[RMDB]
RNA sequence: GGGAACGACUCGAGUAGAGUCGAAAACGAUCUCGUAGUGGUUGAGACUCCUCCAGGCGGUGGGAAGACUACCCAAUUAGUUGCAUUAUUUUUCAACUUGUGGAUGAAAGGCGUUGCAGUCAGAGUCGUAACAGCAAAUAAAAAUUCUGCUGAGGAGAAUACGAUGCGAAUUCGUUCGCAUCGUAUUAAAAGAAACAACAACAACAAC
Reactivity to DMS in 0.01 (KOAc 150mM, MgCl2 10mM, bicine 150mM(pH8.5), 24C), signal-to-noise 1, nucleotides 027 to 156: c070g000a050u000c010u010c060g030u000a140g000u020g000g000u000u020g020a190g010a080c040u000c010c010u000c000c070a110g000g010c070g010g000u020g000g000g020a050a090g000a170c010u010a070c040c000c030a080a150u000u000a070g010u010u020g000c030a060u000u010a190u000u010u010u010u000c000a040a040c010u010u010g010u010g020g000a110u000g010a050a040a130g000g010c070g030u000u000g000c050a130g000u000c030a070g010a090g000u000c020g030u000a060a130c040a110g000c010a020a080a080u000a070a050a120a030a230u000u000c060u000g000c050u020g000a100g020g010a100g010
Reactivity to 2A3 in 0.01 (KOAc 150mM, MgCl2 10mM, bicine 150mM(pH8.5), 24C), signal-to-noise 1, nucleotides 027 to 156: c030g080a130u040c020u020c080g040u120a060g060u030g080g000u020u100g040a050g040a120c040u000c010c010u000c000c010a060g030g010c000g030g000u090g010g140g010a050a070g030a030c000u000a090c010c000c010a010a030u040u080a020g050u000u020g000c040a030u060u090a170u070u300u030u040u110c000a000a000c050u030u040g050u080g120g030a080u040g000a200a000a000g040g000c060g030u030u000g000c040a000g020u010c020a010g020a000g030u040c060g020u020a020a000c000a020g000c030a020a090a090u270a080a200a030a040a030u070u070c070u060g020c020u010g000a050g010g090a040g030